This 207-nucleotide RNA was probed chemically with 2A3.
[RMDB]
RNA sequence: GGGAACGACUCGAGUAGAGUCGAAAAAAAGACCUGAGAGGUGGAAAUGAGUGGAUCAGGUUGUGCCAGGCCAUGGGAGAUAGAUUCAGGAGACAGUAAGGGAUGUGGAAUAGGAAAGAAAGGAAUGGAAAUAUCUGUCUUUUCAUUUAGGGUGAUAAUCAUUUACGGAGUUCGCUCCGUAAAUGAUAAAAGAAACAACAACAACAAC
Reactivity to 2A3 in 0.01 (KOAc 150mM, MgCl2 10mM, bicine 150mM(pH8.5), 24C), signal-to-noise 1, nucleotides 027 to 156: a000a000a000g020a050c000c000u030g000a080g000a020g050g050u110g010g000a030a070a140u110g010a020g040u060g020g060a050u050c070a050g000g050u000u030g020u050g020c070c070a020g000g000c010c010a040u050g010g000g020a040g020a000u030a040g050a010u110u090c050a080g070g000a010g010a020c010a010g020u110a030a090g000g030g000a000u050g000u090g030g010a020a020u010a050g030g030a030a040a020g060a070a020a000g090g000a070a000u090g020g090a070a070a020u120a080u110c030u030g040u060c000u050u080u050u130c070a100u040u040u150a020g050g010g000u020g010a030u080a100

It was measured as part of the RMDB library OK3TST.